[RMDB]
Source: RMDB library TTRDEL, as collected in RNAgym. Chemical mapping of a 177-nucleotide RNA with DMS and 2A3. Conditions: 150 mM KOAc, 10 mM MgCl2 and 150 mM bicine (pH 8.5), 24 C.
RNA sequence: GGGAACGACUCGAGUAGAGUCGAAAAGAUAUGGAAGCCUACCCACCGAACUACUCGUAAACCUCGGAAACGAGGUGAACGAGCGAGGGCUUCCUAAGUCAAACUACUAAUCUUCGGAUUAGUAGAAGCCAACACAUUAGUUCGCUAAUGUGUUGGCAAAAGAAACAACAACAACAAC
Reactivity to DMS in 0.01 (KOAc 150mM, MgCl2 10mM, bicine 150mM(pH8.5), 24C), signal-to-noise 1, nucleotides 027 to 126: g050a010u020a160u000g000g070a030a000g010c000c010u000a110c000c000c030a300c160c140g000a020a090c040u010a250c000u000c010g080u000a050a200a050c000c000u010c000g020g000a090a100a170c000g000a000g000g010u000g000a200a000c020g000a050g030c030g000a020g000g000g000c000u000u000c000c000u000a020a060g010u000c100a090a120a210c000u000a000c000u000a000a000u000c000u000u000c240g010g000a010u000u000a010g000u000a000g000a000a150
Reactivity to 2A3 in 0.01 (KOAc 150mM, MgCl2 10mM, bicine 150mM(pH8.5), 24C), signal-to-noise 1, nucleotides 027 to 126: g010a040u250a150u210g000g010a000a040g000c030c020u060a190c160c000c030a060c000c010g030a080a080c080u260a030c030u270c010g010u040a070a000a000c000c020u020c010g000g000a050a080a050c000g000a000g020g010u000g000a000a000c020g000a000g000c000g010a050g000g000g000c000u000u020c020c010u040a140a010g070u050c140a130a090a120c020u030a020c000u030a010a000u000c010u030u130c300g170g020a010u030u000a000g020u000a030g000a010a000